[RMDB]
RNA sequence: GGGAACGACUCGAGUAGAGUCGAAAACGAAAGACAGUGAGUGGACGGAACAAAUCCCCUUCCCACCUCCCCACUGUCCACUCACUGUCUUCCUAAGAGGAAAUAUAAAUCGGGGGUGGGAAGGGGACAUACUAAUUACCUUCGGGUAAUUAGUAUGAAAAGAAACAACAACAACAAC
Reactivity to DMS in 0.01 (KOAc 150mM, MgCl2 10mM, bicine 150mM(pH8.5), 24C), signal-to-noise 2, nucleotides 027 to 126: c300g030a090a090a080g010a000c010a000g010u030g020a000g020u000g010g000a000c010g000g050a160a090c220a040a120a080u060c000c000c000c000u000u000c000c000c000a000c010c010u010c000c020c170c100a110c030u030g000u000c030c010a010c000u000c020a000c010u000g000u000c000u000u010c000c030u000a040a050g000a130g000g000a120a050a100u040a130u040a060a080a070u050c180g000g000g010g000g000u010g000g000g000a000a000g020g010g010g000a090
Reactivity to 2A3 in 0.01 (KOAc 150mM, MgCl2 10mM, bicine 150mM(pH8.5), 24C), signal-to-noise 9, nucleotides 027 to 126: c060g070a060a030a020g000a000c000a000g010u000g010a000g010u000g000g010a010c030g020g050a080a020c050a040a110a090u070c000c000c000c000u000u000c000c000c000a010c000c000u030c030c050c020c040a070c050u050g000u000c000c010a010c000u010c000a000c010u000g000u000c000u000u000c000c000u030a040a010g050a060g140g220a020a110a010u300a040u090a030a140a020u200c100g010g000g000g000g000u000g000g000g000a000a000g000g000g000g000a000
Conditions: 150 mM KOAc, 10 mM MgCl2 and 150 mM bicine (pH 8.5), 24 C. This 177-nucleotide RNA was probed chemically with DMS and 2A3. For 2A3 the reverse transcriptase was SuperScript II with manganese. For DMS, 4,861 sequencing reads were counted.